This 177-nucleotide RNA was probed chemically with 2A3. For 2A3 the reverse transcriptase was SuperScript II with manganese. The reactions ran in a buffer of 150 mM KOAc, 10 mM MgCl2 and 150 mM bicine (pH 8.5), at 24 C.
RNA sequence: GGGAACGACUCGAGUAGAGUCGAAAAUAGAUACAAGUACUAGAUCAACUAGAAAAUAAAUAAAUACAAAAGCAACCUCUCGAAACUAGUUAAUCUAGUACAAACGAGAUGUUGCAAAAAUAAAAUACCUAUUACUGCCUUUCGAGGCAGUAAUAGGAAAAGAAACAACAACAACAAC
Reactivity to 2A3 in 0.01 (KOAc 150mM, MgCl2 10mM, bicine 150mM(pH8.5), 24C), signal-to-noise 2, nucleotides 027 to 126: u020a000g100a020u140a190c100a140a070g050u000a050c000u000a020g120a200u190c020a160a090c020u030a000g100a250a120a020a000u160a020a090a050u300a070a090a040u230a130c060a000a300a090a060g020c020a000a010c000c000u000c000u020c020g070a050a000a050c000u000a000g000u100u150a100a070u030c000u000a000g000u000a090c000a000a000a000c000g000a000g000a000u020g000u000u000g110c000a000a000a000a060a000u130a010a130a000a000u220a020
The 2A3 profile rests on 794 reads.